The data come from the RNA Mapping Database (RMDB), library OK2TRN. Chemical mapping of a 177-nucleotide RNA with DMS and 2A3. For 2A3 the reverse transcriptase was SuperScript II with manganese. The RNA was probed in 150 mM KOAc, 10 mM MgCl2 and 150 mM bicine (pH 8.5) at 24 C. The DMS profile rests on 2,634 reads.
RNA sequence: GGGAACGACUCGAGUAGAGUCGAAAAUCGCUGAGAUCGAGAAGAAGGUGGUGAGACCCGAGGUCUUCAAGGACGUGUACGGGAAGGUGGCGUCGGGAGAGAACAACCCCCAGUGGAAGACGCUGGCUGCUUCUGAACUAUUCGUAGUUCAGAAGCAAAAAGAAACAACAACAACAAC
Reactivity to DMS in 0.01 (KOAc 150mM, MgCl2 10mM, bicine 150mM(pH8.5), 24C), signal-to-noise 3, nucleotides 027 to 126: u010c050g000c090u000g020a120g000a060u010c030g010a120g030a100a090g010a110a080g030g040u010g010g010u000g000a040g000a090c030c010c060g010a110g000g000u000c030u020u000c150a090a130g000g010a040c060g010u000g010u000a070c100g000g000g020a040a100g030g020u010g010g010c060g020u010c060g030g000g000a070g000a090g000a070a050c090a060a130c010c010c020c000c010a050g000u000g000g010a090a080g000a200c040g010c020u000g010g000c220
Reactivity to 2A3 in 0.01 (KOAc 150mM, MgCl2 10mM, bicine 150mM(pH8.5), 24C), signal-to-noise 1, nucleotides 027 to 126: u060c010g000c040u040g030a040g000a160u060c060g040a020g010a170a020g040a050a010g100g040u080g000g040u050g040a040g020a030c010c020c030g010a050g040g010u050c050u150u060c130a080a080g050g000a010c020g040u060g000u120a070c040g000g010g090a050a040g030g000u030g030g020c030g000u050c030g010g060g010a050g000a000g020a000a080c030a040a080c010c000c000c000c000a000g020u030g050g020a100a060g080a040c010g000c010u010g030g000c050